[RMDB]
RNA sequence: GGGAACGACUCGAGUAGAGUCGAAAACUCCCACCAUAGCCCAGGUGGGAGUUCUGGGCUAUGGUGUGCUAUGCCAAUUGAGUGUCCGCACUAAGUUCGGCAUCAAUAUGGUGACCUCCCAGGAGCAGAACCGGUCAUAUUUCGAUAUGACCGGUUCAAAAGAAACAACAACAACAAC
Reactivity to 2A3 in 0.01 (KOAc 150mM, MgCl2 10mM, bicine 150mM(pH8.5), 24C), signal-to-noise 1, nucleotides 027 to 126: c030u070c030c010c000a000c010c000a010u010a000g000c000c000c000a000g060g010u070g070g000g010a000g000u040u000c000u000g010g010g000c010u000a010u000g020g020u000g000u000g000c060u200a180u290g010c020c000a000a020u020u020g030a110g120u070g060u060c020c050g030c070a030c090u180a150a140g030u100u060c010g030g000c010a010u030c020a000a040u130a280u150g010g040u020g090a050c000c000u000c000c000c000a070g150g070a010g030c150a080
Reactivity to DMS in 0.01 (KOAc 150mM, MgCl2 10mM, bicine 150mM(pH8.5), 24C), signal-to-noise 2, nucleotides 027 to 126: c110u020c030c020c000a030c000c000a020u000a010g000c000c000c020a020g020g030u000g020g000g020a010g010u000u000c000u000g000g000g010c070u010a000u000g000g010u000g010u000g020c190u030a120u000g030c020c010a070a040u000u000g000a070g010u010g000u010c040c040g000c120a110c090u030a140a110g020u000u010c040g010g010c000a020u000c050a000a000u000a110u020g020g010u000g000a020c300c020u000c000c000c010a230g000g000a110g030c150a160